Conditions: 150 mM KOAc, 10 mM MgCl2 and 150 mM bicine (pH 8.5), 24 C. An RNA of 177 nucleotides, treated with 2A3 and DMS and read out base by base. For 2A3 the reverse transcriptase was SuperScript II with manganese. The 2A3 profile rests on 2,972 reads.
RNA sequence: GGGAACGACUCGAGUAGAGUCGAAAAAGAUCAGCGAGAAUUUGCUGGCGUAAUGUGUGCUCUUCCGCCAGGGAAUGAUUGUAUCGGUGAAUAAGCUGACGAGCGCGCAGGCGAUCGCGAGAUAACGCCUGGUUUAUUUUUUCGAAAAUAAACCAGGAAAAGAAACAACAACAACAAC
Reactivity to 2A3 in 0.01 (KOAc 150mM, MgCl2 10mM, bicine 150mM(pH8.5), 24C), signal-to-noise 3, nucleotides 027 to 126: a000g080a130u050c030a020g040c000g040a030g070a150a190u070u050u110g100c000u010g020g000c010g010u030a070a130u110g070u010g040u090g100c010u020c000u030u010c030c010g020c020c000a050g030g040g060a060a070u140g060a070u140u150g090u140a080u090c040g010g020u050g030a110a110u160a130a010g030c010u010g030a030c020g010a020g030c030g000c010g000c040a030g040g090c020g040a060u060c010g000c040g010a060g020a130u060a080a040c040g020
Reactivity to DMS in 0.01 (KOAc 150mM, MgCl2 10mM, bicine 150mM(pH8.5), 24C), signal-to-noise 4, nucleotides 027 to 126: a100g000a080u010c030a060g010c010g020a060g010a180a060u010u000u000g010c020u000g000g000c060g000u000a070a030u000g020u000g030u000g010c070u000c040u000u010c100c030g010c020c020a040g010g000g000a040a060u000g000a110u010u000g010u000a170u000c040g000g030u000g010a080a070u010a090a140g000c020u000g020a070c070g000a080g020c040g000c060g010c160a060g000g010c020g010a060u010c030g010c080g000a100g000a080u000a080a100c230g010